Overview: This 177-nucleotide RNA was probed chemically with 2A3. The data come from the RNA Mapping Database (RMDB), library RFM100. Reactivities are given for positions 27 through 126. Conditions: 150 mM KOAc, 10 mM MgCl2 and 150 mM bicine (pH 8.5), 24 C. For 2A3 the reverse transcriptase was SuperScript II with manganese.

RNA sequence: GGGAACGACUCGAGUAGAGUCGAAAAGAAAGAAAUGGAGAGCAGAGAUACCUCUGGAGAAGCGCGUGACCUGACCCCAGCAGGAGAACCCAACCCGCUUUUCCACCUAGGUGUCUCUCUCUCUCAACGGGACUUGUGGAUUCGUCCACAAGUCCCGAAAAGAAACAACAACAACAAC
Reactivity to 2A3 in 0.01 (KOAc 150mM, MgCl2 10mM, bicine 150mM(pH8.5), 24C), signal-to-noise 1, nucleotides 027 to 126: g080a020a060a000g180a020a130a020u290g000g000a020g000a000g020c120a000g010a000g000a000u000a000c000c000u050c040u040g010g010a000g040a010a000g000c010g020c000g040u070g020a050c010c050u040g160a220c000c030c000c110a000g010c000a040g050g020a140g090a110a050c030c010c020a010a010c010c010c000g000c000u000u000u000u000c010c000a000c030c050u070a000g000g000u000g000u000c000u000c000u000c000u000c020u000c000u000c020a040a000